Chemical mapping of a 207-nucleotide RNA with 2A3. Conditions: 150 mM KOAc, 10 mM MgCl2 and 150 mM bicine (pH 8.5), 24 C. Reactivities are given for positions 27 through 156. For 2A3, 581 sequencing reads were counted. For 2A3 the reverse transcriptase was SuperScript II with manganese. It was measured as part of the RMDB library M2RFPK.
RNA sequence: GGGAACGACUCGAGUAGAGUCGAAAAAGAGGCGAUACGUCGCCUCAAGCUUGGUGCUUAGCUUCUUUCACCAAGCAUAUUACACGCGGAUAACCGCCAAAGGAUAAACACUGACUACGGUCAGUGAGGAAGUUGGUUCGGUUCGCCGAACCAACAACAGUCAUACCUGCUUCGGCAGGUAUGACUGAAAAGAAACAACAACAACAAC
Reactivity to 2A3 in 0.01 (KOAc 150mM, MgCl2 10mM, bicine 150mM(pH8.5), 24C), signal-to-noise 1, nucleotides 027 to 156: a000g000a000g000g020c000g000a000u010a040c260g150u000c010g010c000c000u000c000a000a060g000c030u000u000g060g000u000g000c010u140u130a080g040c000u080u000c020u070u040u020c000a000c000c000a000a000g000c000a010u050a000u050u190a020c060a060c040g010c000g010g000a070u080a300a270c000c000g000c010c010a030a200a100g040g000a070u120a030a070a000c030a000c000u000g000a000c000u000a000c220g040g000u000c000a000g000u000g000a000g000g000a130a030g000u000u000g000g000u000u000c000g000g040u020u030c190g040c080c000g010a000a000c000c000a000a000c000a000a000